[RMDB]
RNA sequence: GGGAACGACUCGAGUAGAGUCGAAAAUCCGUCGAUCGAGUAGGAGAAGCGGACGUCGUAGAGAUCCAUCUCGACCCUGAGGAAGACCGGCCCCUCAUCGGGGAGCACCACCUCGUCGUCUCCCAGGCGACCCCAAUAACUUCGGUUAUUGGGGUCGAAAAGAAACAACAACAACAAC
Reactivity to 2A3 in 0.01 (KOAc 150mM, MgCl2 10mM, bicine 150mM(pH8.5), 24C), signal-to-noise 2, nucleotides 027 to 126: u000c000c020g050u040c050g020a060u020c040g000a050g170u220a110g200g060a070g020a100a020g030c020g010g060a120c040g080u120c030g030u100a030g010a000g030a140u010c050c020a100u030c020u040c030g040a040c030c010c030u060g000a060g050g020a160a000g070a090c030c050g050g010c000c010c020c010u050c010a120u090c050g000g000g000g000a000g030c000a050c010c040a040c000c000u010c030g010u000c010g000u030c010u030c090c000c010a000g080g060
Reactivity to DMS in 0.01 (KOAc 150mM, MgCl2 10mM, bicine 150mM(pH8.5), 24C), signal-to-noise 2, nucleotides 027 to 126: u010c000c000g000u010c010g010a250u010c010g000a080g020u010a100g000g010a030g000a170a090g000c010g010g010a020c180g030u000c110g000u000a110g000a100g030a220u000c040c040a150u010c020u000c010g010a020c010c050c060u010g060a060g000g050a110a110g000a090c180c060g000g010c060c040c000c020u000c130a090u010c220g010g020g000g000a060g020c080a090c020c040a140c080c010u000c050g000u000c020g000u020c140u000c010c000c000a080g000g030